[RMDB]
RNA sequence: GGGAACGACUCGAGUAGAGUCGAAAAAGGCCGAGCGCUCGUUCAUAGCCGAGAUGAACUAUCCCCAACGCAAGAUCCGCUAUCUCGUCUAUGAUUUCGACGAGUAUCCCGAGACCGAGGCGAAGGCUGAUAGGUACCCAUUCGUGGGUACCUAUCAAAAAGAAACAACAACAACAAC
Reactivity to DMS in 0.01 (KOAc 150mM, MgCl2 10mM, bicine 150mM(pH8.5), 24C), signal-to-noise 5, nucleotides 027 to 126: a090g020g010c040c020g020a220g020c110g010c020u000c020g020u000u000c010a020u000a040g010c060c020g010a040g000a040u010g000a090a070c130u000a110u010c020c020c010c100a080a120c160g020c110a100a070g000a100u000c050c090g010c120u000a050u000c000u000c000g000u000c000u010a030u000g010a180u000u000u000c180g000a050c010g000a040g010u000a060u010c010c000c000g010a130g010a100c100c030g010a090g000g010c030g000a110a140g010g010c080
Reactivity to 2A3 in 0.01 (KOAc 150mM, MgCl2 10mM, bicine 150mM(pH8.5), 24C), signal-to-noise 2, nucleotides 027 to 126: a000g000g000c010c000g000a000g030c050g010c040u020c020g050u060u100c030a020u000a010g000c040c040g020a030g000a040u060g020a100a040c120u100a280u190c050c000c000c030a080a050c070g000c040a010a070g040a130u090c060c030g030c040u030a010u040c000u000c010g030u050c010u000a040u060g060a110u120u140u150c040g010a020c010g010a030g020u030a060u030c010c010c010g010a010g000a050c060c050g000a000g000g000c020g010a030a000g030g000c020